The data come from the RNA Mapping Database (RMDB), library OK3TST.
Structure probing data (2A3 and DMS) for a 207-nucleotide construct.
The 2A3 profile rests on 1,282 reads.
High DMS reactivity at an A or C suggests that its Watson-Crick edge is free.
[RMDB]
RNA sequence: GGGAACGACUCGAGUAGAGUCGAAAAAUACUAAAGGAAGCUCGUAAUAAAAUACAAAAGAUGAUGAUUUGCAUUGUAAAGUAAUCUGGAUUUUUUUGGUGCAAGUUGUCUUUAAAUAGAAACUCUUCUUGAUUUGUGCAUGCAUGUGCACACAUGCAGUGCAUACUAGAUUCGUCUAGUAUGCACUAAAAGAAACAACAACAACAAC
Reactivity to 2A3 in 0.01 (KOAc 150mM, MgCl2 10mM, bicine 150mM(pH8.5), 24C), signal-to-noise 2, nucleotides 027 to 156: a000u130a040c010u040a050a020a020g030g020a010a040g030c090u060c140g040u020a030a020u110a080a160a080a000u270a060c090a080a130a010a110g100a060u110g000a020u020g010a010u070u020u000g020c010a010u020u070g060u180a050a050a050g040u020a060a030u090c090u180g100g020a130u070u060u000u000u000u050u210g020g010u000g010c000a000a000g010u000u000g010u000c000u000u140u080a040a090a020u130a020g070a040a070a010c050u020c010u080u030c010u020u050g080a120u100u100u130g080u050g050c020a030u060g000c030a060u110g020u030g020c060a000c040a010c010a120u070g050c040
Reactivity to DMS in 0.01 (KOAc 150mM, MgCl2 10mM, bicine 150mM(pH8.5), 24C), signal-to-noise 1, nucleotides 027 to 156: a090u000a130c030u000a090a060a090g000g000a060a060g040c050u010c080g000u000a120a110u000a070a160a100a130u010a120c060a040a080a130a120g010a070u000g020a170u020g010a040u010u000u010g010c000a060u010u000g010u010a020a050a050g000u010a030a030u030c080u000g020g010a050u000u000u000u050u000u000u020g000g040u000g020c020a030a060g020u010u000g000u000c010u010u000u000a010a020a050u000a120g000a110a050a040c060u000c040u000u000c040u000u000g010a130u000u010u000g030u010g030c070a050u020g010c090a060u000g020u000g060c050a050c060a040c050a030u000g030c050